Structure probing data (2A3) for a 207-nucleotide construct.
The data come from the RNA Mapping Database (RMDB), library OK3TST.
The reactions ran in a buffer of 150 mM KOAc, 10 mM MgCl2 and 150 mM bicine (pH 8.5), at 24 C.

RNA sequence: GGGAACGACUCGAGUAGAGUCGAAAAACAAAUUUCUGCCAUCAGGAAUGCCAGGUCACGGAAACUGAGUGCCUCUGCCCUUAUGAAGCUCUAGUGCUCAGAAGGCCUCUAUUUCUAGAUAGUAUAGUCAAAGGCAUGAAAAAUCUGCUGAACUCAACACAUCGUGCAAUUUCGAUUGCACGAUGUGAAAAGAAACAACAACAACAAC
Reactivity to 2A3 in 0.01 (KOAc 150mM, MgCl2 10mM, bicine 150mM(pH8.5), 24C), signal-to-noise 1, nucleotides 027 to 156: a020c050a010a040a030u030u020u000c040u110g010c040c010a030u050c030a050g080g000a050a080u000g030c050c020a030g010g010u040c060a010c080g010g030a030a040a000c010u090g020a050g040u070g000c000c000u080c060u020g040c030c000c000u100u130a150u170g150a160a010g040c010u060c050u070a100g040u090g040c030u020c050a080g010a120a010g010g000c000c000u000c000u010a060u000u050u010c030u020a000g030a060u030a020g050u090a030u060a090g100u080c040a030a040a030g000g000c010a010u080g000a020a090a050a000a030u090c020u040g030c040u040g030a050a050c080u110c090a060a050